[RMDB]
RNA sequence: GGGAACGACUCGAGUAGAGUCGAAAAUUUAUUGCUAUUUUUGAGUCUCUGUUGCAAGUUAUGUGCUUUUAUCUUUCCUUUCUUGUUCUAUCAACUGUAGACGGUAUCUCCCAACCCUUCACAUUGAUAGUACGGAUAAUUUCGAUUAUCCGUACUAAAAAGAAACAACAACAACAAC
Reactivity to DMS in 0.01 (KOAc 150mM, MgCl2 10mM, bicine 150mM(pH8.5), 24C), signal-to-noise 6, nucleotides 027 to 126: u010u010u010a060u020u000g010c070u010a030u000u000u000u000u010g010a130g000u000c010u000c030u000g010u010u000g010c060a060a080g010u010u010a070u000g020u000g000c040u020u000u000u010a060u020c070u000u000u000c020c010u000u000u000c050u010u000g010u010u010c050u010a080u000c040a040a070c120u000g000u000a060g020a040c190g000g010u000a080u000c080u000c000c010c010a100a170c090c030c020u010u000c070a060c100a110u000u000g010a180
Reactivity to 2A3 in 0.01 (KOAc 150mM, MgCl2 10mM, bicine 150mM(pH8.5), 24C), signal-to-noise 3, nucleotides 027 to 126: u070u050u050a120u080u120g020c010u030a080u100u130u020u090u080g090a040g020u040c010u010c020u050g130u100u080g020c030a050a050g010u140u090a120u190g080u050g000c000u000u050u060u090a100u080c040u000u090u030c020c000u020u090u040c020u050u050g040u120u010c020u040a090u100c010a020a070c050u060g010u100a040g000a030c020g010g000u020a050u000c060u010c000c000c020a020a060c040c000c020u050u120c060a040c010a160u040u080g030a050